[RMDB]
RNA sequence: GGGAACGACUCGAGUAGAGUCGAAAAUGCAGGCCACGUACCGCGCGGCCGUGGAAAACGUGCUCGCGGAGCUGGACCAGCAGCGGCUGCUGGCGCACGACGCCCAGUCGGCGGCGCAGCUCGAGCGCGCGAUUACGGACCACGCCAGCUUUCGCGGGCACAUGAAGAUGUUCGCAUCUUCAUGUGCAAAAGAAACAACAACAACAAC
Reactivity to DMS in 0.01 (KOAc 150mM, MgCl2 10mM, bicine 150mM(pH8.5), 24C), signal-to-noise 2, nucleotides 027 to 156: u000g040c060a040g030g020c000c030a050c020g040u010a150c110c060g040c020g010c050g050g020c070c010g000u000g000g010a120a070a140a040c070g010u010g050c000u000c010g050c070g020g010a030g000c010u000g010g020a120c010c030a110g020c050a080g010c060g020g000c020u010g030c000u000g010g010c000g030c030a110c100g010a090c030g010c010c000c020a120g030u000c170g020g020c060g020g010c010g010c010a120g000c020u000c020g010a050g040c010g010c000g040c010g010a140u000u020a190c040g000g000a090c030c060a050c020g020c010c030a060g000c010u010u000u000c000g010c040g030g000
Reactivity to 2A3 in 0.01 (KOAc 150mM, MgCl2 10mM, bicine 150mM(pH8.5), 24C), signal-to-noise 3, nucleotides 027 to 156: u110g020c050a030g040g030c030c020a060c040g030u060a100c030c040g010c020g010c040g040g010c050c030g020u040g020g010a090a070a010a020c010g010u010g030c000u000c000g020c030g030g010a000g000c000u040g020g040a140c020c020a010g000c020a030g070c010g020g000c000u030g010c060u140g070g000c040g000c040a260c170g200a090c010g070c010c060c000a020g010u020c020g060g190c050g060g000c020g000c020a010g010c010u020c050g090a080g060c080g000c010g000c000g040a020u020u150a060c080g050g020a030c010c030a030c060g010c010c020a020g000c000u070u110u140c010g010c000g000g010